[RMDB]
Chemical mapping of a 207-nucleotide RNA with 2A3 and DMS. The data come from the RNA Mapping Database (RMDB), library M2RFPK. The 2A3 profile rests on 5,289 reads. For DMS the reverse transcriptase was MarathonRT. For 2A3 the reverse transcriptase was SuperScript II with manganese. Reactivities are given for positions 27 through 156.
RNA sequence: GGGAACGACUCGAGUAGAGUCGAAAAGGUAUGAUUAGGGUGAGACCUAGGAACCGUAGGGGUAUUCUCAAAGGAAGCUUUUGCAGUGACGCCCAUGUCAGUGGGAUAUAACAACAGAACUCGUAUGUGUGGCACAGAGAGUUCGCUCUCUGUGCAAUCUUAACUAAUUGUUCGCAAUUAGUUAAGAAAAAGAAACAACAACAACAAC
Reactivity to 2A3 in 0.01 (KOAc 150mM, MgCl2 10mM, bicine 150mM(pH8.5), 24C), signal-to-noise 5, nucleotides 027 to 156: g040g010u100a040u130g040a080u120u110a040g030g000g020u030g050a080g030a060c010c030u030a040g040g040a040a030c050c030g030u080a040g010g010g010g000u040a090u070u070c050u010c020a070a070a020g050g020a070a010g040c010u050u070u090u110g020c060a030g000u020g030a020c060g020c000c030c020a010u070g140u100c060a050g020u030g010g010g020a010u030a010u050a120a070c090a010a020c020a040g090a080a040c020u050c120g060u090a080u130g070u020g010u060g060g000c000a000c000a000g000a010g000a000g010u040u020c040g060c000u000c000u000c010u000g000u010g000c010a000a000
Reactivity to DMS in 0.01 (KOAc 150mM, MgCl2 10mM, bicine 150mM(pH8.5), 24C), signal-to-noise 4, nucleotides 027 to 156: g000g020u000a040u010g010a150u010u000a050g000g020g030u010g000a130g000a120c020c010u010a130g020g000a080a060c010c020g030u000a090g010g010g020g020u000a050u000u000c030u000c040a080a110a140g000g000a090a090g010c020u010u000u010u000g020c020a080g000u000g010a140c080g000c010c000c010a060u000g010u010c150a130g050u000g000g010g000a070u010a060u010a090a100c020a060a120c040a090g000a040a060c060u000c040g000u000a100u000g020u000g000u000g030g000c000a020c000a010g010a050g000a040g030u000u000c300g010c020u000c010u000c000u000g030u010g040c000a000a010